[RMDB]
RNA sequence: GGGAACGACUCGAGUAGAGUCGAAAACAUCACAAGAAACAGCUCGUGCGUUUGUUAAGAAAAUGCGUGCUUAUGUUCGUAAAUUAACACUUGGAAUGGGUUCUCGUAAAUACAAUCACACAGGUGUACAUACUCGUUCUGAAAUGGAAGGAUUACACUGUUCUAUGAACUUCGGUUCAUAGAACAGAAAAGAAACAACAACAACAAC
Reactivity to DMS in 0.01 (KOAc 150mM, MgCl2 10mM, bicine 150mM(pH8.5), 24C), signal-to-noise 3, nucleotides 027 to 156: c030a100u010c060a140c070a110a110g010a180a070a080c070a120g030c040u000c030g040u000g030c030g000u010u000u000g020u000u000a100a130g000a050a060a060a090u000g020c020g050u000g000c050u000u000a070u000g020u000u000c040g040u000a060a070a140u010u000a030a100c010a040c010u010u010g010g020a070a040u000g010g030g040u010u010c050u000c070g050u000a050a050a130u010a050c050a050a100u000c060a060c060a080c060a060g010g000u000g010u000a080c110a100u000a050c050u000c050g020u000u010c050u000g000a030a080a060u000g010g030a130a080g000g000a130u010u000a110c050a190
Reactivity to 2A3 in 0.01 (KOAc 150mM, MgCl2 10mM, bicine 150mM(pH8.5), 24C), signal-to-noise 5, nucleotides 027 to 156: c030a050u160c030a030c050a110a080g070a070a130a000c020a030g020c000u030c070g070u060g030c030g020u030u070u060g080u100u120a120a040g080a070a070a040a030u050g000c010g020u020g010c020u160u110a100u140g030u050u050c040g040u060a070a120a040u070u080a070a030c020a000c050u030u040g020g030a060a020u030g070g050g000u020u020c060u020c050g010u060a000a050a020u120a040c070a010a080u110c050a010c030a010c020a090g020g030u020g040u020a000c010a020u080a030c010u000c060g060u060u020c010u040g070a060a070a040u080g030g020a020a030g060g030a010u050u040a030c060a010